[RMDB]
Record summary: This 177-nucleotide RNA was probed chemically with DMS and 2A3. The 2A3 profile rests on 2,233 reads.
RNA sequence: GGGAACGACUCGAGUAGAGUCGAAAACGAGGGCCACGGCUGCGGAACGGGUCGUUGCCGGACAACCUGGGGCCACCAGAACCACUUUCCGAGGAGGGCCGCGAUCGACGGUGUCAUGAACGACCGGGUUAUAUGUCUCCUUCGGGAGACAUAUAACAAAAGAAACAACAACAACAAC
Reactivity to DMS in 0.01 (KOAc 150mM, MgCl2 10mM, bicine 150mM(pH8.5), 24C), signal-to-noise 3, nucleotides 027 to 126: c070g000a120g010g010g000c020c070a090c040g020g000c020u000g000c060g030g000a080a140c070g010g000g010u000c020g010u000u000g000c030c010g000g010a090c080a050a080c070c030u000g000g000g010g010c060c050a090c000c060a090g000a090a130c100c060a080c120u000u020u000c020c030g010a160g000g000a160g010g010g010c030c030g010c060g000a110u000c100g000a070c040g000g030u000g010u010c050a070u010g000a090a070c100g020a070c010c030g020g000
Reactivity to 2A3 in 0.01 (KOAc 150mM, MgCl2 10mM, bicine 150mM(pH8.5), 24C), signal-to-noise 2, nucleotides 027 to 126: c030g020a100g030g050g030c000c030a020c040g050g000c020u180g100c060g050g090a060a080c030g020g010g010u050c010g020u030u040g080c040c040g000g000a060c080a120a100c010c010u020g060g020g050g000c040c020a040c000c020a040g040a070a030c040c000a060c080u010u110u080c050c010g010a030g070g010a030g030g020g000c000c020g040c010g050a100u120c050g060a070c040g040g020u030g010u070c050a110u090g070a080a020c030g020a010c020c020g080g000

Reactivities are rounded to 0.1 and cut off at 0 and 3. The reactions ran in a buffer of 150 mM KOAc, 10 mM MgCl2 and 150 mM bicine (pH 8.5), at 24 C.